The data come from the RNA Mapping Database (RMDB), library OK3TST. Chemical mapping of a 207-nucleotide RNA with 2A3. For 2A3 the reverse transcriptase was SuperScript II with manganese. The reactions ran in a buffer of 150 mM KOAc, 10 mM MgCl2 and 150 mM bicine (pH 8.5), at 24 C. Reactivities are rounded to 0.1 and cut off at 0 and 3.

RNA sequence: GGGAACGACUCGAGUAGAGUCGAAAACAGCAGAACAAUUUGCUGAGGGCUAUUGAGGCGCAACAGCAUCUGUUGCAACUCACAGUCUGGGGCAUCAAGCAGCUCCAGGCAAGAAUCCUGGCUGUGGAAAGAUACCUAAAGGAUCAACAGCUCCUGGACUUUAUGAACCCUUCGGGGUUCAUAAAGUAAAAGAAACAACAACAACAAC
Reactivity to 2A3 in 0.01 (KOAc 150mM, MgCl2 10mM, bicine 150mM(pH8.5), 24C), signal-to-noise 1, nucleotides 027 to 156: c000a000g040c020a030g090a150a140c060a190a250u140u170u140g010c040u040g030a090g000g070g000c030u070a090u110u150g030a000g000g050c070g000c030a000a000c000a020g010c090a160u100c060u020g000u010u000g000c020a030a030c000u000c000a020c020a020g000u000c000u000g010g000g030g020c010a050u160c050a080a160g090c070a000g000c010u030c000c000a000g000g000c010a030a020g110a020a040u040c000c000u000g100g000c060u000g030u110g000g030a070a160a040g060a000u120a250c010c010u040a100a130a070g030g000a010u070c040a030a090c000a040g000c010u030c020c000u000g020g090